[RMDB]
RNA sequence: GGGAACGACUCGAGUAGAGUCGAAAAAAACUGGGACUCGCCCGGCAGGUUCAGGUGCUUGAUGGACGCGACGAUAUACCUCGAUUUUUUGCUGGCGCAGAUUUAUUGUUGCAUCCCGCCUAUCAGGCGCAUCGUGUUAGUUCGCUAACACGAUGCGAAAAGAAACAACAACAACAAC
Reactivity to DMS in 0.01 (KOAc 150mM, MgCl2 10mM, bicine 150mM(pH8.5), 24C), signal-to-noise 2, nucleotides 027 to 126: a050a060a070c080u000g000g000g020a090c040u000c090g000c080c020c030g000g010c050a050g020g010u020u000c060a060g030g000u000g000c070u010u000g020a050u000g010g010a040c090g000c040g010a030c030g020a070u010a080u000a080c040c030u000c060g000a020u000u000u010u000u010u000g010c040u000g010g010c130g010c080a060g020a060u000u010u000a050u000u000g000u000u000g020c050a140u000c020c040c050g010c040c040u000a050u000c130a090g000g000
Reactivity to 2A3 in 0.01 (KOAc 150mM, MgCl2 10mM, bicine 150mM(pH8.5), 24C), signal-to-noise 1, nucleotides 027 to 126: a020a050a010c060u060g010g000g070a000c010u050c120g010c030c070c020g040g020c030a000g110g010u050u000c040a020g030g080u020g050c010u100u080g010a070u070g050g000a000c020g020c000g050a010c010g010a010u040a040u020a120c010c010u050c030g050a090u030u000u000u010u230u160g080c070u050g040g000c030g000c050a010g010a020u000u110u110a070u090u080g040u050u070g000c000a020u040c000c010c000g010c010c000u050a120u080c070a020g070g000
Source: RMDB library OK2TST, as collected in RNAgym. Structure probing data (DMS and 2A3) for a 177-nucleotide construct. For 2A3, 902 sequencing reads were counted. Reactivities are rounded to 0.1 and cut off at 0 and 3. DMS adducts were read by reverse transcription with MarathonRT. The RNA was probed in 150 mM KOAc, 10 mM MgCl2 and 150 mM bicine (pH 8.5) at 24 C.